Structure probing data (DMS) for a 177-nucleotide construct. The RNA was probed in 150 mM KOAc, 10 mM MgCl2 and 150 mM bicine (pH 8.5) at 24 C. The DMS profile rests on 1,368 reads.
RNA sequence: GGGAACGACUCGAGUAGAGUCGAAAAGAUAUGGAGCAGACAUGGCUAAACGGUGCGUUGAAAUUUCUCAGCUCGGAAACGAGCUGAGAAAUGGAGCACCCGGUGGCCAACAGCUGCUCCUAAGUCAGUGGUAAAUUAUCUUCGGAUAAUUUACCACAAAAGAAACAACAACAACAAC
Reactivity to DMS in 0.01 (KOAc 150mM, MgCl2 10mM, bicine 150mM(pH8.5), 24C), signal-to-noise 2, nucleotides 027 to 126: g010a030u000a300u010g010g010a050g020c000a000g020a050c160a300u010g000g020c000u010a020a300a220c300g000g020u010g010c040g040u000u020g000a160a090a040u000u000u000c040u000c000a010g020c000u020c010g000g010a090a050a170c020g000a030g000c010u010g000a000g010a000a010a000u020g000g010a130g020c010a010c000c020c000g010g030u040g010g000c020c000a000a080c290a190g000c000u010g000c000u000c010c010u020a000a130g000u000c090a060